[RMDB]
RNA sequence: GGGAACGACUCGAGUAGAGUCGAAAAGAAAGAAAUCACCUGGGGAUCUUGUUAAAUGAGAUUCUGGUUCGGUAGGAAUGGGGCCUGAGAUUCUGCAUUUCUAACAAGUUCUCAGGUGAUGCCACAAAUAAUGACGAUUGUUCGCAAUCGUCAUUAUAAAAGAAACAACAACAACAAC
Reactivity to 2A3 in 0.01 (KOAc 150mM, MgCl2 10mM, bicine 150mM(pH8.5), 24C), signal-to-noise 8, nucleotides 027 to 126: g080a010a090a000g100a010a160a010u010c000a000c000c000u000g010g010g010g010a020u120c010u020u010g000u000u030a020a030a010u020g000a000g000a010u010u010c020u030g000g020u020u050c060g090g300u130a110g090g160a150a140u300g030g000g000g020c010c020u080g040a060g010a100u080u020c010u100g160c010a020u010u050u070c060u020a010a000c000a010a000g010u020u010c000u000c000a000g000g000u000g000a000u000g000c000c000a080c050a030a170
Reactivity to DMS in 0.01 (KOAc 150mM, MgCl2 10mM, bicine 150mM(pH8.5), 24C), signal-to-noise 4, nucleotides 027 to 126: g010a090a090a070g020a070a190a030u000c010a010c000c010u000g020g020g000g000a010u030c010u000u000g000u000u000a000a020a010u000g000a050g010a020u010u000c000u010g010g010u000u000c010g040g010u020a160g020g020a170a080u030g010g000g000g000c010c000u010g000a040g010a030u020u010c010u010g020c020a020u000u010u020c280u020a000a010c010a000a020g000u000u000c000u000c000a000g000g000u000g020a000u000g000c090c030a120c160a050a080
Structure probing data (2A3 and DMS) for a 177-nucleotide construct.
The RNA was probed in 150 mM KOAc, 10 mM MgCl2 and 150 mM bicine (pH 8.5) at 24 C.
2A3 adducts were read by reverse transcription with SuperScript II with manganese.